[RMDB]
RNA sequence: GGGAACGACUCGAGUAGAGUCGAAAAAGGCUAUCCGUUAGGUAAGACAACCAUAAACUCGCAGAAUACGCUCUCUGUGACGGCAAAACCCUCCGCGGACCCGCGUAAAAAGCUGGAUUAUACGGCACCCCUAAUCCGAUUUCGAUCGGAUUAGGGGAAAAGAAACAACAACAACAAC
Reactivity to DMS in 0.01 (KOAc 150mM, MgCl2 10mM, bicine 150mM(pH8.5), 24C), signal-to-noise 2, nucleotides 027 to 126: a110g010g030c080u000a090u010c000c060g000u030u000a010g050g060u040a160a070g000a050c170a050a120c010c100a020u060a120a040a110c090u030c040g010c010a090g000a100a070u000a040c100g000c080u000c020u000c000u000g060u000g030a080c000g010g000c160a000a070a070a220c090c000c010u000c000c130g020c010g000g060a160c000c020c000g020c030g010u020a020a000a020a090a060g000c000u000g010g000a000u040u040a120u010a090c080g010g060c060a140
Reactivity to 2A3 in 0.01 (KOAc 150mM, MgCl2 10mM, bicine 150mM(pH8.5), 24C), signal-to-noise 3, nucleotides 027 to 126: a030g070g000c040u050a020u000c070c010g060u110u160a070g010g080u070a030a050g030a150c070a110a120c060c010a020u170a090a040a000c050u030c020g040c020a020g040a110a000u120a130c060g010c020u000c000u000c000u020g030u030g130a030c010g010g020c000a000a000a080a130c000c000c000u030c010c020g000c010g030g040a090c000c060c000g010c020g110u120a030a070a080a110a050g020c020u020g010g050a080u040u130a100u080a150c030g000g000c020a020

The record gives the reactivity of an RNA of 177 nucleotides to DMS and 2A3. It was measured as part of the RMDB library OK1LIB. For DMS the reverse transcriptase was MarathonRT. The DMS profile rests on 1,582 reads. For 2A3 the reverse transcriptase was SuperScript II with manganese.